[RMDB]
RNA sequence: GGGAACGACUCGAGUAGAGUCGAAAAUCUAUCAAAUUCGUUUGAUAGAAAACCCGCCGUAGGCACCAAGAUCGAGCUACGGACAUCUAAGAGAGCAAAUAAACAGCCCCCCAUUCGUGGGGGGCAAGAUUGUAUCGGUAUUCGUACCGAUACAAUCAAAAGAAACAACAACAACAAC
Reactivity to DMS in 0.01 (KOAc 150mM, MgCl2 10mM, bicine 150mM(pH8.5), 24C), signal-to-noise 1, nucleotides 027 to 126: u010c000u010a000u000c010a000a000a040u000u030c180g020u020u000u000g000a020u000a020g010a000a030a160a270c000c010c010g040c060c000g000u010a060g070g050c110a070c060c060a090a110g040a100u000c130g000a110g010c010u020a030c010g030g010a120c100a090u010c100u000a090a100g000a060g000a090g000c100a030a120a100u000a040a100a070c180a060g000c020c000c000c000c000c000a040u000u010c140g030u000g000g000g000g000g000g000c020a000a030